[RMDB]
RNA sequence: GGGAACGACUCGAGUAGAGUCGAAAAACGUCCGCGUACGCGCGGACGAGAGGUAUGAGGAAAAUAUCGGACAGUCUGAUUACCACUGAAGACUGAUAAGAUCCAACUCUGACCUCAACAAAGCCAACAGGCUUUGCAGGUUCGCCUGCAAAGCCUGAAAAGAAACAACAACAACAAC
Reactivity to DMS in 0.01 (KOAc 150mM, MgCl2 10mM, bicine 150mM(pH8.5), 24C), signal-to-noise 1, nucleotides 027 to 126: a140c140g070u000c000c000g060c000g060u000a060c190g060c000g090c040g000g020a000c000g000a110g020a000g000g020u000a190u060g000a000g000g000a120a040a000a180u000a000u020c000g000g000a220c000a000g000u000c000u000g000a290u030u000a150c000c250a000c290u060g020a250a000g000a020c000u000g000a000u000a300a050g000a000u000c030c000a050a260c000u000c000u000g060a000c050c000u000c000a180a060c300a140a000a060g000c000c100a080a300
Reactivity to 2A3 in 0.01 (KOAc 150mM, MgCl2 10mM, bicine 150mM(pH8.5), 24C), signal-to-noise 3, nucleotides 027 to 126: a020c000g000u000c000c000g090c010g000u000a020c220g000c000g000c000g100g010a000c000g000a030g000a010g000g000u010a040u170g020a010g070g120a170a030a020a030u170a100u030c030g000g010a000c000a000g020u000c000u000g020a110u050u220a190c050c010a110c110u040g120a020a000g000a010c000u000g010a010u060a250a010g020a010u000c020c060a040a070c000u000c020u090g090a110c010c000u030c000a000a030c040a060a070a000g060c010c030a050a020

The record gives the reactivity of an RNA of 177 nucleotides to DMS and 2A3.
Reactivities are given for positions 27 through 126.
Reactivities are rounded to 0.1 and cut off at 0 and 3.
For 2A3, 1,361 sequencing reads were counted.